[RMDB]
Description: The record gives the reactivity of an RNA of 177 nucleotides to 2A3 and DMS. DMS adducts were read by reverse transcription with MarathonRT. For 2A3 the reverse transcriptase was SuperScript II with manganese. In probing experiments dimethyl sulfate is read out at A N1 and C N3, which are open when not base-paired.
RNA sequence: GGGAACGACUCGAGUAGAGUCGAAAACGCUGUUAACGCCAAGCUUGUUCCUUUUGGGGCCGUCCAACAGGGGGCGCCAGUUCUCUCCGCGCUCCCGCGUGGCUGGCCCCUGAUGGUCUUAGACCUCAUCCAGAUGAAUAUUCGUAUUCAUCUGGAUAAAAGAAACAACAACAACAAC
Reactivity to 2A3 in 0.01 (KOAc 150mM, MgCl2 10mM, bicine 150mM(pH8.5), 24C), signal-to-noise 4, nucleotides 027 to 126: c030g000c020u070g030u120u110a170a030c070g030c050c020a020a030g000c020u020u040g000u010u030c010c000u020u040u040u070g010g000g000g020c000c000g050u060c010c010a080a050c040a120g000g010g000g010g010c000g000c010c010a040g030u200u070c110u020c020u040c090c020g010c000g000c010u020c000c000c000g020c060g010u010g010g000c020u050g000g010c000c000c000c000u010g010a010u020g000g000u000c030u080u180a050g020a030c000c000u010c020
Reactivity to DMS in 0.01 (KOAc 150mM, MgCl2 10mM, bicine 150mM(pH8.5), 24C), signal-to-noise 8, nucleotides 027 to 126: c090g010c060u010g010u000u010a080a130c110g010c060c050a110a060g010c100u010u000g010u000u000c010c000u000u000u000u000g000g000g000g010c010c000g010u000c000c000a050a050c090a290g000g000g000g000g010c010g010c000c220a100g000u020u010c120u010c050u010c130c230g010c000g010c000u000c000c000c000g000c150g000u000g000g000c010u010g030g000c000c000c000c000u000g000a010u030g010g010u000c010u010u020a120g010a020c010c010u000c040